RNA sequence: GGGAACGACUCGAGUAGAGUCGAAAAGAUAUGGAACUCCUCCCCACCGAGAUAGGGACUAUUCGGAAACGAACGAAUCCCUACCUCGAGGGAGUUCCUAAGUCGGGCGCGAGCUUCGGCUCGCGAACUAUAGUUAAGGCUUCGGCCUUAACUAUAGAAAAGAAACAACAACAACAAC
Reactivity to DMS in 0.01 (KOAc 150mM, MgCl2 10mM, bicine 150mM(pH8.5), 24C), signal-to-noise 7, nucleotides 027 to 126: g010a080u010a240u010g000g010a010a020c010u000c010c010u010c120c020c010c030a300c100c000g000a010g010a020u000a000g010g010g010a020c090u000a300u000u000c000g010g000a120a100a150c040g010a010a030c090g000a070a110u000c000c000c000u000a000c020c000u000c000g000a090g000g000g000a020g000u000u000c000c010u000a030a100g010u010c060g000g020g000c020g010c000g000a020g010c010u000u020c180g030g020c000u000c000g020c000g000a020a070
Reactivity to 2A3 in 0.01 (KOAc 150mM, MgCl2 10mM, bicine 150mM(pH8.5), 24C), signal-to-noise 3, nucleotides 027 to 126: g030a060u220a140u280g000g000a010a000c010u000c000c010u080c040c040c000c000a010c020c000g000a010g000a000u010a010g030g030g020a030c070u150a090u010u020c010g060g080a190a080a080c050g030a050a000c040g040a070a260u010c000c000c010u000a010c000c000u010c010g020a010g000g000g000a000g000u000u010c010c000u000a070a020g150u080c120g050g040g110c020g000c010g010a010g000c020u060u070c270g090g000c000u000c020g000c000g000a010a010
Structure probing data (DMS and 2A3) for a 177-nucleotide construct.
The reactions ran in a buffer of 150 mM KOAc, 10 mM MgCl2 and 150 mM bicine (pH 8.5), at 24 C.
Values cover nucleotides 27 to 126.
2A3 adducts were read by reverse transcription with SuperScript II with manganese.
The data come from the RNA Mapping Database (RMDB), library TTRDEL.